Structure probing data (DMS and 2A3) for a 177-nucleotide construct.

RNA sequence: GGGAACGACUCGAGUAGAGUCGAAAAGAUAUGGAGACAUUACUCAACAGCCUGAUGAUGUCGGAAACGACAUCCCAGGACAUGAGUUGUGUCUCCUAAGUCAAACCGAGUCGUUCGCGACUCGGAACAUUAAGUACGACUUCGGUCGUACUUAAUGAAAAGAAACAACAACAACAAC
Reactivity to DMS in 0.01 (KOAc 150mM, MgCl2 10mM, bicine 150mM(pH8.5), 24C), signal-to-noise 7, nucleotides 027 to 126: g000a030u000a300u000g000g010a030g000a010c000a010u000u010a020c000u000c000a070a110c290a210g010c000c000u000g000a050u010g010a020u000g010u000c000g010g010a090a070a150c010g010a010c000a000u000c000c300c000a000g000g000a050c110a170u010g000a020g000u000u000g000u000g000u000c000u000c000c000u010a010a060g010u000c030a100a130a180c000c000g000a010g000u000c000g030u010u010c220g020c010g010a010c000u000c000g000g010a040a080
Reactivity to 2A3 in 0.01 (KOAc 150mM, MgCl2 10mM, bicine 150mM(pH8.5), 24C), signal-to-noise 7, nucleotides 027 to 126: g030a020u060a020u140g010g010a010g010a010c000a000u010u080a010c010u010c030a150a170c070a300g140c000c000u080g030a130u090g000a000u010g040u000c000g010g010a040a040a020c010g000a000c000a010u000c040c030c010a020g020g040a050c080a210u230g000a000g010u000u020g010u000g000u010c000u020c000c000u000a020a010g010u000c030a030a040a130c000c000g000a000g000u000c000g020u040u080c260g000c020g110a010c000u000c000g010g020a030a010
Conditions: 150 mM KOAc, 10 mM MgCl2 and 150 mM bicine (pH 8.5), 24 C.